[RMDB]
The record gives the reactivity of an RNA of 177 nucleotides to 2A3 and DMS. The RNA was probed in 150 mM KOAc, 10 mM MgCl2 and 150 mM bicine (pH 8.5) at 24 C. The DMS profile rests on 2,308 reads. The data come from the RNA Mapping Database (RMDB), library OK1LIB.

RNA sequence: GGGAACGACUCGAGUAGAGUCGAAAAUGCGGCCGACGACGAGCAGACGAGAGGAGAAGUGCGCUCUGAGAUCAUGGAGGCGGCUGAACGGCUUGUUAAUCUCAUAAAACUGGUGGAUCUCGACGAGGUCUUUACCCUUCUUCGGAAGGGUAAAGACAAAAGAAACAACAACAACAAC
Reactivity to 2A3 in 0.01 (KOAc 150mM, MgCl2 10mM, bicine 150mM(pH8.5), 24C), signal-to-noise 3, nucleotides 027 to 126: u060g010c020g080g000c040c000g030a120c030g020a010c000g030a010g030c060a040g050a120c090g040a040g020a000g140g080a070g020a140a000g130u110g050c010g000c020u020c000u080g120a130g010a070u070c040a100u130g070g010a030g040g090c040g000g000c000u000g030a070a010c050g010g010c000u060u020g060u040u140a080a070u020c010u000c070a060u120a130a090a080a060c040u070g000g010u080g020g060a010u000c000u000c020g010a050c070g030a030g140
Reactivity to DMS in 0.01 (KOAc 150mM, MgCl2 10mM, bicine 150mM(pH8.5), 24C), signal-to-noise 2, nucleotides 027 to 126: u000g000c140g020g000c030c040g020a160c060g000a140c040g000a200g030c000a040g000a150c030g020a140g030a050g000g000a070g000a110a090g020u000g000c020g000c070u000c030u000g010a170g000a090u050c090a030u040g070g000a090g010g030c030g000g010c040u000g000a080a100c070g000g010c010u010u010g020u000u000a140a120u000c030u000c020a110u040a000a090a100a070c150u020g000g020u020g000g000a060u010c000u000c000g000a090c080g000a150g060